[RMDB]
RNA sequence: GGGAACGACUCGAGUAGAGUCGAAAAGGGACCCAGAGCAGAGUCUGGCCACAUCCCUUGGGGGCUCCUGGUCAGGCUGGGGAGUCACCUGAACAAAGAAGACAGUGUCUAGAGCUGUGGGACAUGGUGAGGACCCUUUAUUCGUAAAGGGUCCUCAAAAAGAAACAACAACAACAAC
Reactivity to DMS in 0.01 (KOAc 150mM, MgCl2 10mM, bicine 150mM(pH8.5), 24C), signal-to-noise 1, nucleotides 027 to 126: g010g000g000a140c230c000c050a090g010a130g030c090a160g000a110g020u010c000u010g020g000c060c010a070c170a080u010c000c000c000u030u040g000g000g000g020g000c100u000c070c100u020g010g010u010c020a020g020g020c010u030g000g020g020g020a080g010u000c050a080c000c000u050g000a100a120c100a060a060a150g000a160a130g010a030c040a080g000u000g000u000c050u010a110g000a050g000c090u000g010u000g000g000g000a130c070a070u030g010g000